[RMDB]
RNA sequence: GGGAACGACUCGAGUAGAGUCGAAAAGAGUCAUACAACCCCAGAAACCAUUCCUUAUACCUUGAGUAUUGAUGAAUUCAGUUUAGCGUGCAUGCUCUUGGCUAUUCUCAUAGUGAUUGUCAAAUUUAAAACGACGAUGACUUCGGUCAUCGUCGAACUGAUGCAGUUAGUUCGCUAACUGCAUCAGAAAAGAAACAACAACAACAAC
Reactivity to DMS in 0.01 (KOAc 150mM, MgCl2 10mM, bicine 150mM(pH8.5), 24C), signal-to-noise 1, nucleotides 027 to 156: g040a030g010u000c030a100u010a060c080a090a110c020c000c070c070a200g010a140a080a070c030c020a120u000u010c030c030u000u000a150u010a040c010c070u000u010g000a110g000u000a040u000u010g030a040u000g010a030a050u000u020c120a110g010u010u000u010a050g000c070g060u000g010c030a040u000g000c010u000c000u010u000g010g000c030u000a140u000u000c030u020c030a150u000a130g030u000g030a110u010u000g030u000c020a050a140a150u000u020u010a030a080a130a160c050g000a030c000g050a020u000g010a030c010u000u020c230g090g010u010c000a000u000c000g000u020c000g010a000a060
Reactivity to 2A3 in 0.01 (KOAc 150mM, MgCl2 10mM, bicine 150mM(pH8.5), 24C), signal-to-noise 2, nucleotides 027 to 156: g020a010g080u140c040a020u070a180c090a060a140c050c000c010c050a020g050a070a060a030c030c000a050u090u100c000c020u000u030a030u040a160c020c010u090u150g050a070g110u040a080u120u100g040a070u020g040a110a070u170u050c080a040g090u020u120u190a090g050c090g010u030g080c050a040u030g010c000u000c000u040u030g000g030c000u000a060u150u020c010u030c050a040u090a080g070u060g110a130u070u030g050u020c080a090a050a030u060u140u220a080a110a010a020c030g000a000c010g000a000u000g000a000c000u030u030c190g000g000u000c000a000u000c000g010u000c000g000a000a000
Chemical mapping of a 207-nucleotide RNA with DMS and 2A3. Conditions: 150 mM KOAc, 10 mM MgCl2 and 150 mM bicine (pH 8.5), 24 C. DMS adducts were read by reverse transcription with MarathonRT.